[RMDB]
Structure probing data (DMS and 2A3) for a 177-nucleotide construct. For DMS, 2,875 sequencing reads were counted. The data come from the RNA Mapping Database (RMDB), library 15KREP. The reactions ran in a buffer of 150 mM KOAc, 10 mM MgCl2 and 150 mM bicine (pH 8.5), at 24 C.

RNA sequence: GGGAACGACUCGAGUAGAGUCGAAAAAUACCGUAUAAGGUUUGCAACUCUGUUAAGGAUACUCUGGCUUAUUAUGCUCACAGCGUGUUGUACAGAGUUUUUCCUUAUGACAUGGAUUCUGGUGUGUGUAUAAGGUAAGCUUCGGCUUACCUUAUACAAAAGAAACAACAACAACAAC
Reactivity to DMS in 0.01 (KOAc 150mM, MgCl2 10mM, bicine 150mM(pH8.5), 24C), signal-to-noise 3, nucleotides 027 to 126: a050u000a060c020c020g030u010a070u010a060a080g000g000u000u000u010g020c130a050a050c030u000c040u000g000u000u000a060a030g000g000a030u000a020c010u010c020u000g000g000c050u010u000a120u000u010a070u000g000c030u010c200a260c170a060g000c040g030u000g000u000u000g020u000a060c010a030g000a020g010u000u010u000u010u000c000c000u000u000a020u000g000a060c080a080u000g010g010a150u000u000c050u010g000g010u000g010u010g020u000
Reactivity to 2A3 in 0.01 (KOAc 150mM, MgCl2 10mM, bicine 150mM(pH8.5), 24C), signal-to-noise 1, nucleotides 027 to 126: a000u020a000c010c010g020u030a090u030a120a050g010g010u010u020u040g020c040a020a010c010u010c000u020g040u090u090a050a000g100g000a010u010a040c020u000c010u020g000g000c000u000u100a050u190u130a080u250g020c030u040c050a080c070a060g040c030g030u020g000u020u050g050u010a090c000a000g000a010g010u000u000u000u060u000c010c000u030u000a040u040g090a000c010a050u170g060g050a070u120u000c040u120g100g000u070g040u020g030u000